[RMDB]
Description: Source: RMDB library M2PK50, as collected in RNAgym. Chemical mapping of a 177-nucleotide RNA with 2A3 and DMS. DMS adducts were read by reverse transcription with MarathonRT. The RNA was probed in 150 mM KOAc, 10 mM MgCl2 and 150 mM bicine (pH 8.5) at 24 C. For DMS, 1,536 sequencing reads were counted. Reactivities are given for positions 27 through 126.
RNA sequence: GGGAACGACUCGAGUAGAGUCGAAAACGGCACUGCUUCGGCAGUGCCGAAAUCUUGGCCAAAUGUAUAGCAUAAAGCAGGCGGAAGUGCACUUAGAAUAAGAAAGUAACACCUUCGGGUGUUACAACACUACUUCGAAGUUCGCUUCGAAGUAGUGAAAAGAAACAACAACAACAAC
Reactivity to 2A3 in 0.01 (KOAc 150mM, MgCl2 10mM, bicine 150mM(pH8.5), 24C), signal-to-noise 2, nucleotides 027 to 126: c010g020g050c010a000c010u000g060c040u080u070c150g060g000c010a010g030u000g030c010c020g000a000a000a000u010c000u020u130g060g020c030c020a040a090a040u080g040u040a130u100a160g010c020a050u060a200a190a060g040c030a040g050g010c040g010g030a050a000g020u050g030c020a010c100u080u150a050g070a140a040u100a160a060g100a110a080a020g040u000a010a000c000a020c020c000u030u070c160g070g010g010u000g000u000u000a000c000a000a000
Reactivity to DMS in 0.01 (KOAc 150mM, MgCl2 10mM, bicine 150mM(pH8.5), 24C), signal-to-noise 2, nucleotides 027 to 126: c030g020g020c000a040c000u000g000c010u000u020c200g020g000c020a000g050u000g000c000c000g000a010a060a030u000c090u000u000g010g020c020c030a060a140a060u010g000u000a050u000a070g020c040a050u000a050a090a160g020c060a070g000g000c060g000g020a040a010g000u000g000c060a030c040u000u000a060g000a080a060u000a050a080g010a090a090a110g000u000a000a020c000a000c010c000u000u010c210g030g020g040u000g000u000u000a000c000a130a140